[RMDB]
RNA sequence: GGGAACGACUCGAGUAGAGUCGAAAAGUCGCCGCGUCGACAUCAACGCCCAGCGCGGGCGAGGGAGGCGUCCUACGGGGGUGACCCAUUCGCCGGCAUGGCAGAGGACGGCAAGAUUGCCGCGACGCAUGGCAUCCUAGUUCGCUAGGAUGCCAUGAAAAGAAACAACAACAACAAC
Reactivity to 2A3 in 0.01 (KOAc 150mM, MgCl2 10mM, bicine 150mM(pH8.5), 24C), signal-to-noise 3, nucleotides 027 to 126: g050u010c020g010c070c010g010c030g030u050c010g000a060c010a100u080c030a040a040c040g000c020c030c000a070g070c300g020c070g110g010g000c000g010a000g030g070g010a240g010g030c030g020u020c000c000u040a090c110g100g000g000g010g120u160g100a210c000c030c000a030u070u060c010g000c030c000g060g040c070a070u080g010g000c010a000g010a020g090g030a030c030g030g000c040a020a020g130a200u120u300g010c010c000g010c000g000a020c020g000
Reactivity to DMS in 0.01 (KOAc 150mM, MgCl2 10mM, bicine 150mM(pH8.5), 24C), signal-to-noise 4, nucleotides 027 to 126: g030u000c050g010c020c140g000c030g020u000c020g020a140c150a100u000c050a100a160c120g000c030c000c050a160g000c160g020c100g000g000g010c020g000a020g010g000g010a170g010g010c040g010u000c000c000u000a110c140g000g010g030g000g010u010g000a170c040c010c010a190u010u010c050g000c010c010g020g010c050a090u020g000g000c010a150g010a180g000g010a120c000g000g010c040a060a130g000a090u010u000g020c020c060g000c020g000a020c090g000
Structure probing data (2A3 and DMS) for a 177-nucleotide construct. The data come from the RNA Mapping Database (RMDB), library OK2TRN. The 2A3 profile rests on 3,474 reads.